[RMDB]
RNA sequence: GGGAACGACUCGAGUAGAGUCGAAAACGCAACGAACGCGAGCGCAACCGAGUCAAGCUGGUCAACCUGGGCUUCGCCACGCUACGCGAGCACGUGCCCAACGGCAGCAAGAACAAGAAGAUGAGCAGUCUCAGAUAAAUUUCGAUUUAUCUGAGACAAAAGAAACAACAACAACAAC
Reactivity to 2A3 in 0.01 (KOAc 150mM, MgCl2 10mM, bicine 150mM(pH8.5), 24C), signal-to-noise 7, nucleotides 027 to 126: c030g010c040a040a050c060g090a060a010c040g020c030g050a020g020c020g000c040a030a050c020c030g010a020g030u040c050a040a020g010c030u060g050g040u060c030a060a070c020c030u040g000g040g000c010u100u070c030g020c040c030a120c030g030c020u150a050c060g010c000g020a000g010c030a010c100g030u060g010c000c010c010a040a020c040g040g000c010a010g020c020a030a030g040a040a030c040a060a020g140a040a020g060a100u150g050a020g040c040a010
Reactivity to DMS in 0.01 (KOAc 150mM, MgCl2 10mM, bicine 150mM(pH8.5), 24C), signal-to-noise 8, nucleotides 027 to 126: c090g020c080a090a070c090g010a090a100c120g000c040g010a080g020c040g010c060a080a100c090c040g000a090g020u000c070a040a110g010c030u010g010g020u010c070a060a110c100c030u010g000g010g000c040u000u000c100g020c050c070a060c060g010c010u010a060c070g010c020g010a080g010c050a070c050g000u000g010c010c000c010a060a090c130g010g010c020a030g000c030a040a050g000a040a050c090a030a060g000a060a080g000a080u010g000a110g010c130a140
Chemical mapping of a 177-nucleotide RNA with 2A3 and DMS. The DMS profile rests on 12,436 reads. The data come from the RNA Mapping Database (RMDB), library OK2TST. Values cover nucleotides 27 to 126. The RNA was probed in 150 mM KOAc, 10 mM MgCl2 and 150 mM bicine (pH 8.5) at 24 C. The 2A3 profile rests on 21,148 reads.